RNA sequence: GGGAACGACUCGAGUAGAGUCGAAAAGAUAUGGAUCAUGGAGAACUCCUACUGUCGGAAACGACAGUAGGAGACCAUGAGUCCUAAGUCAAAGUCAUAUCUUCGAGUUCGCUCGAAGAUAUGACAACCUUUAUUUUAUGUUCGCAUAAAAUAAAGGAAAAGAAACAACAACAACAAC
Reactivity to 2A3 in 0.01 (KOAc 150mM, MgCl2 10mM, bicine 150mM(pH8.5), 24C), signal-to-noise 3, nucleotides 027 to 126: g030a020u080a060u160g010g000a000u020c010a010u010g010g030a280g080a270a170c020u020c000c000u000a010c010u000g000u010c010g010g060a120a050a080c000g020a000c010a030g000u040a000g000g000a010g020a020c020c000a000u010g010a000g070u070c000c000u020a090a020g070u040c060a170a040a000g000u000c000a000u000a010u010c000u000u000c000g010a000g020u060u160c270g090c110u000c000g000a000a000g000a000u000a000u010g000a000c000a000a000
Reactivity to DMS in 0.01 (KOAc 150mM, MgCl2 10mM, bicine 150mM(pH8.5), 24C), signal-to-noise 5, nucleotides 027 to 126: g000a030u010a300u000g000g010a210u000c000a000u000g000g000a110g010a140a110c010u000c000c000u000a010c000u000g010u000c000g000g000a100a080a190c010g020a000c000a010g010u000a000g000g000a000g010a010c000c000a000u000g000a040g010u000c000c000u000a040a130g010u000c030a080a130a160g000u000c000a010u000a000u000c000u000u000c000g000a010g010u000u010c210g020c000u000c000g000a020a000g000a000u000a000u000g000a000c000a030a040